Chemical mapping of a 177-nucleotide RNA with DMS. For DMS, 1,019 sequencing reads were counted. For DMS the reverse transcriptase was MarathonRT. The reactions ran in a buffer of 150 mM KOAc, 10 mM MgCl2 and 150 mM bicine (pH 8.5), at 24 C.

RNA sequence: GGGAACGACUCGAGUAGAGUCGAAAAUGACGAGUUCAGUACGAACGCGAGCGGGACCGGAGCGGACGGGCAGAAGGUCCGGAAGCUGAUGGGGCCGCUCGUGUUCAAGAUCCGCAAGUACAACGGCAACAAGGACCUGGUUCGCCAGGUCCUUGUUAAAAGAAACAACAACAACAAC
Reactivity to DMS in 0.01 (KOAc 150mM, MgCl2 10mM, bicine 150mM(pH8.5), 24C), signal-to-noise 1, nucleotides 027 to 126: u000g000a060c070g000a140g010u000u000c040a070g040u020a100c120g020a020a010c010g010c010g020a000g010c000g000g000g000a110c000c000g000g000a060g020c000g000g030a300c050g010g010g000c010a260g000a110a090g010g030u000c000c000g000g000a260a140g000c000u000g010a170u000g010g000g010g010c000c000g000c040u000c000g000u000g000u000u000c010a040a070g010a090u010c010c000g030c040a060a150g000u000a080c050a070a030c000g000g020c300